[RMDB]
RNA sequence: GGGAACGACUCGAGUAGAGUCGAAAAGAUAUGGACGUCAGAACGCGACAGCCGAGUCGGAAACGAUAUCUGUCGAACUACGUUCCUGACGUCCUAAGUCAAAGAAGUGGAGUUCGCUCCACUUCAAGUUGGUGCUAGUGUUCGCACUAGCACCAACAAAAGAAACAACAACAACAAC
Reactivity to DMS in 0.01 (KOAc 150mM, MgCl2 10mM, bicine 150mM(pH8.5), 24C), signal-to-noise 1, nucleotides 027 to 126: g030a010u000a300u040g000g010a010c000g010u000c000a020g000a080a010c030g050c010g000a040c000a030g000c300c070g000a110g000u010c020g020g000a040a060a230c030g000a010u000a010u000c000u000g020u000c000g010a160a070c140u000a300c040g020u000u000c170c030u000g000a000c010g000u020c000c000u000a010a030g020u000c050a030a090a260g000a020a000g010u000g000g010a000g020u000u050c170g030c000u000c000c000a020c000u000u000c010a030a030
Reactivity to 2A3 in 0.01 (KOAc 150mM, MgCl2 10mM, bicine 150mM(pH8.5), 24C), signal-to-noise 1, nucleotides 027 to 126: g040a010u000a010u060g000g000a020c000g000u000c010a010g020a000a020c000g000c020g260a010c040a010g130c080c140g100a140g110u030c000g000g020a010a060a000c010g000a010u050a070u070c000u020g020u020c010g060a130a110c140u160a080c210g000u020u030c160c000u000g040a000c010g000u010c000c000u000a000a010g000u000c010a000a000a160g000a010a000g000u000g010g020a000g000u080u140c250g130c110u000c000c000a000c000u040u020c010a000a000

Conditions: 150 mM KOAc, 10 mM MgCl2 and 150 mM bicine (pH 8.5), 24 C. An RNA of 177 nucleotides, treated with DMS and 2A3 and read out base by base. For DMS the reverse transcriptase was MarathonRT. Reactivities are rounded to 0.1 and cut off at 0 and 3. Source: RMDB library TTRDEL, as collected in RNAgym.